[RMDB]
RNA sequence: GGGAACGACUCGAGUAGAGUCGAAAACAGAGCUAAUGAGCCACAUACCUACCCAAGGUGAAAGCUCCUUCUCUCGCAAUGUGUAACUCAUCAUUCUCAUGACCCCUGGUUGGAGAGAUCCGGACUAUAGACUAGAGGGUGUUCGCACCCUCUAGAACAUACAUAAUUUGUUCGCAAAUUAUGUAUGAAAAGAAACAACAACAACAAC
Reactivity to DMS in 0.01 (KOAc 150mM, MgCl2 10mM, bicine 150mM(pH8.5), 24C), signal-to-noise 4, nucleotides 027 to 156: c060a110g010a080g030c170u000a090a060u000g010a060g040c020c020a050c060a110u000a050c030c010u010a140c040c060c040a120a110g020g020u010g010a090a130a160g010c040u000c020c050u000u000c020u000c010u000c020g030c060a110a080u000g030u000g010u010a060a050c020u000c030a080u000c030a090u000u010c030u000c000a150u000g000a130c030c000c010c020u000g010g020u000u000g000g000a110g020a150g010a060u000c020c040g000g000a100c070u010a090u000a140g000a200c010u000a020g010a020g000g020g030u000g030u000u010c280g020c000a030c010c000c000u000c000u000a000g000a050a140
Reactivity to 2A3 in 0.01 (KOAc 150mM, MgCl2 10mM, bicine 150mM(pH8.5), 24C), signal-to-noise 3, nucleotides 027 to 156: c070a000g050a010g040c030u120a110a070u060g020a020g050c030c020a040c010a040u150a030c010c000u040a080c000c010c030a040a040g000g010u050g060a130a050a010g030c020u040c000c010u070u030c050u000c020u030c040g040c100a070a090u050g010u010g030u100a080a040c030u010c020a030u020c010a070u180u030c030u020c060a090u190g100a150c000c020c000c040u040g030g030u030u040g030g000a030g000a000g000a040u000c030c020g000g010a020c030u040a060u120a260g080a080c000u000a010g000a010g010g000g000u000g010u030u030c100g010c030a000c000c010c000u000c000u000a000g000a000a000